[RMDB]
RNA sequence: GGGAACGACUCGAGUAGAGUCGAAAACACAUUCUAUUCGUAGAAUGUGGAACGUAGAGAGAUCGACAGCGUCGCAGCUAUGUCGAACGACGAAGAGCGCGCAGGGAUCGGGCUUCGGCCCGAUCAACGAUCUCGCAAAUUUCGAUUUGCGAGAUCGAAAAGAAACAACAACAACAAC
Reactivity to 2A3 in 0.01 (KOAc 150mM, MgCl2 10mM, bicine 150mM(pH8.5), 24C), signal-to-noise 1, nucleotides 027 to 126: c020a010c000a000u010u000c000u020a020u080u030c110g070u040a000g000a010a020u000g000u020g000g020a050a040c020g090u200a050g020a000g010a010g000a140u020c020g060a020c020a070g000c010g090u170c050g020c050a050g020c020u100a080u190g000u000c020g030a200a090c090g050a010c020g050a070a100g010a030g050c020g000c010g010c040a000g090g120g040a010u000c000g030g000g010c000u050u050c210g070g000c020c020c000g030a000u010c000a010a010
Reactivity to DMS in 0.01 (KOAc 150mM, MgCl2 10mM, bicine 150mM(pH8.5), 24C), signal-to-noise 2, nucleotides 027 to 126: c000a000c000a010u000u000c000u000a030u010u020c170g020u000a010g000a010a000u000g010u020g040g000a090a050c130g010u000a080g010a170g020a110g010a080u000c020g000a150c050a110g010c020g030u000c160g000c120a110g000c020u000a210u000g000u000c000g000a050a110c070g000a110c050g020a070a090g000a050g000c030g010c030g040c040a120g010g010g000a000u000c000g000g040g000c000u000u020c250g040g000c000c000c000g010a000u000c000a020a070
Structure probing data (2A3 and DMS) for a 177-nucleotide construct. The DMS profile rests on 1,417 reads. The reactions ran in a buffer of 150 mM KOAc, 10 mM MgCl2 and 150 mM bicine (pH 8.5), at 24 C.